[RMDB]
RNA sequence: GGGAACGACUCGAGUAGAGUCGAAAACACUAGCUUUCGAAGCUGUAACUGACUUUCGAAGCUGUAAUGCUUACAGCAAUGUAAGCGUGAUACCUAGCAGAGUCAGUGAUACCUAGCAGAGCUAGAAGAUAAUGUUUACUUUCGAGUGGACAUUAUCAAAAGAAACAACAACAACAAC
Reactivity to 2A3 in 0.01 (KOAc 150mM, MgCl2 10mM, bicine 150mM(pH8.5), 24C), signal-to-noise 9, nucleotides 027 to 126: c030a000c000u000a000g000c010u070u090u100c090g190a150a020g000c030u020g010u010a040a020c000u000g010a000c000u040u110u090c110g180a170a020g000c010u000g010u010a020a010u040g000c000u000u000a000c000a010g010c030a040a090u020g000u000a000a000g000c000g000u010g020a030u060a080c040c070u050a010g000c020a000g010a000g010u000c000a000g000u010g010a020u030a060c010c040u020a010g000c020a000g010a000g000c000u000a010g020a050a010
Reactivity to DMS in 0.01 (KOAc 150mM, MgCl2 10mM, bicine 150mM(pH8.5), 24C), signal-to-noise 9, nucleotides 027 to 126: c070a260c010u000a000g000c010u000u000u000c060g010a130a090g020c130u000g010u010a110a020c000u000g000a010c000u000u000u010c060g010a120a100g010c110u010g000u010a110a010u010g000c000u000u000a000c000a000g010c290a090a090u000g000u000a000a000g000c000g020u000g000a100u030a040c170c040u000a200g010c160a160g000a010g010u000c000a000g010u000g010a110u030a040c170c040u010a170g010c150a140g000a020g000c000u000a000g000a100a090